[RMDB]
RNA sequence: GGGAACGACUCGAGUAGAGUCGAAAACACGAGUUGCAGUUUUUCAUUAAUCCAGAAUCCUGUGAAUUGCCCAGAACAAAAUAUAGGAUUGGGCUUUGGGGUUGGCUGCUAUUCAUUGGGAUUCAUCAUCUAGUAUACGAUUCGUCGUAUACUAGAUAAAAGAAACAACAACAACAAC
Reactivity to 2A3 in 0.01 (KOAc 150mM, MgCl2 10mM, bicine 150mM(pH8.5), 24C), signal-to-noise 4, nucleotides 027 to 126: c050a010c050g040a040g040u060u060g030c040a010g010u020u020u040u110u140c070a080u070u210a140a070u050c030c010a030g040a030a010u020c000c000u010g000u000g070a060a050u030u060g010c000c030c020a030g030a050a020c040a020a130a130a020u300a050u130a120g110g040a070u040u040g020g020g020c020u060u070u080g030g020g000g010u060u020g040g000c020u040g000c000u020a020u020u010c030a030u060u280g060g000g010a040u060u010c010a030u060c000
Reactivity to DMS in 0.01 (KOAc 150mM, MgCl2 10mM, bicine 150mM(pH8.5), 24C), signal-to-noise 7, nucleotides 027 to 126: c060a130c140g010a100g010u000u000g010c080a090g010u000u000u000u010u010c050a100u010u010a100a090u010c100c090a160g000a040a020u000c010c000u000g010u000g000a050a090u000u000g010c010c020c060a070g010a100a120c050a030a050a070a080u010a110u000a110g010g010a100u000u000g010g010g010c050u000u000u000g000g000g000g010u000u000g010g010c050u000g010c030u000a020u000u000c030a060u000u010g030g000g000a060u000u000c040a100u010c170